[RMDB]
Structure probing data (DMS and 2A3) for a 177-nucleotide construct. For 2A3, 9,759 sequencing reads were counted. The reactions ran in a buffer of 150 mM KOAc, 10 mM MgCl2 and 150 mM bicine (pH 8.5), at 24 C.
RNA sequence: GGGAACGACUCGAGUAGAGUCGAAAAGAUAUGGAGCUGAAGAGCGUCGCUACUCCAUCGAUCUCGGAAACGAGGGAGGAGUAAAAGUCGCUCCAGCUCCUAAGUCAAAGGGCAGUUCGCUGCCCAAGUGACUAUUCUUCUUCGGAAGAAUAGUCACAAAAGAAACAACAACAACAAC
Reactivity to DMS in 0.01 (KOAc 150mM, MgCl2 10mM, bicine 150mM(pH8.5), 24C), signal-to-noise 4, nucleotides 027 to 126: g010a060u000a300u000g000g000a010g010c010u000g010a170a120g010a000g020c000g010u000c020g000c230u000a010c010u010c000c020a290u010c220g000a040u010c000u000c010g010g010a110a100a200c010g000a020g000g030g000a030g020g000a030g000u000a000a010a070a110g000u000c000g000c000u000c000c000a020g010c010u000c000c000u000a010a070g000u000c030a110a130a100g010g010g020c000a010g000u000u010c280g020c010u000g000c000c000c000a010a020
Reactivity to 2A3 in 0.01 (KOAc 150mM, MgCl2 10mM, bicine 150mM(pH8.5), 24C), signal-to-noise 4, nucleotides 027 to 126: g040a000u080a030u160g000g010a000g000c010u030g060a280a040g010a150g010c010g010u010c000g010c070u030a020c000u000c000c000a220u300c030g030a070u000c010u000c020g020g020a120a060a050c010g000a010g000g000g000a020g000g020a000g000u020a010a060a010a080g020u010c010g000c000u000c000c000a000g000c000u000c000c000u000a020a020g020u010c040a090a050a040g000g010g000c010a010g000u080u160c240g070c140u000g000c000c000c010a000a010
It was measured as part of the RMDB library TTRDEL. DMS adducts were read by reverse transcription with MarathonRT.